[RMDB]
RNA sequence: GGGAACGACUCGAGUAGAGUCGAAAAGUGACUAGGAAUCAGGAUCCAGUGGAUCCGUGGGAAUUAUCCCGUUCCACCCCCGCGGCACACUCCUUCCCCCCUGCGGGCCCCCCCAUAAGAUGGCAGGCAUAACACUUGUGUUCGCACAAGUGUUAUGAAAAGAAACAACAACAACAAC
Reactivity to DMS in 0.01 (KOAc 150mM, MgCl2 10mM, bicine 150mM(pH8.5), 24C), signal-to-noise 2, nucleotides 027 to 126: g020u000g040a150c090u010a160g020g020a040a040u010c130a120g010g010a020u000c000c010a240g030u000g030g010a010u000c010c000g050u000g020g010g010a050a100u010u010a090u000c000c000c020g010u000u000c000c010a190c130c130c000c000c000g020c040g000g000c080a070c030a080c060u000c040c030u010u000c000c000c000c060c070c050u000g030c060g000g000g000c010c010c020c010c010c010c000a040u010a030a070g000a100u000g000g020c150a040g000g000